[RMDB]
Chemical mapping of a 177-nucleotide RNA with 2A3 and DMS. The reactions ran in a buffer of 150 mM KOAc, 10 mM MgCl2 and 150 mM bicine (pH 8.5), at 24 C. For DMS the reverse transcriptase was MarathonRT.
RNA sequence: GGGAACGACUCGAGUAGAGUCGAAAAUACUCCCGUUCAUCCCUGAGUUGCUCGUGCGUACGAUCCGUUUUCUUUGAGUCGCGUUGUUUGGGAAUGCAGCGCAAAGUAGGUGGUAAAUUCCAUCUAACAUCAAUCAUGAGUUCGCUCAUGAUUGAUGAAAAGAAACAACAACAACAAC
Reactivity to 2A3 in 0.01 (KOAc 150mM, MgCl2 10mM, bicine 150mM(pH8.5), 24C), signal-to-noise 2, nucleotides 027 to 126: u070a030c040u030c030c010c000g020u060u120c030a120u090c030c000c000u020g060a070g090u080u130g110c000u020c030g040u040g070c010g000u080a040c020g020a070u040c020c000g000u030u080u010u000c050u030u090u040g080a040g060u150c050g000c000g000u010u000g020u030u060u090g130g040g000a070a090u030g000c000a000g000c010g040c050a010a010a000g070u070a010g000g040u020g040g020u020a080a140a160u190u020c000c020a010u010c010u020a010a030
Reactivity to DMS in 0.01 (KOAc 150mM, MgCl2 10mM, bicine 150mM(pH8.5), 24C), signal-to-noise 3, nucleotides 027 to 126: u000a170c160u000c000c000c000g010u010u010c070a130u000c010c030c020u000g010a090g010u000u000g010c030u000c080g030u000g000c060g000u010a060c070g010a090u010c040c030g020u000u000u000u000c050u000u000u000g010a110g020u000c120g000c040g030u010u000g010u000u010u000g010g010g010a120a100u020g010c030a030g000c050g030c020a080a060a130g020u000a010g010g020u000g010g010u000a050a100a200u010u010c000c000a010u000c020u000a070a190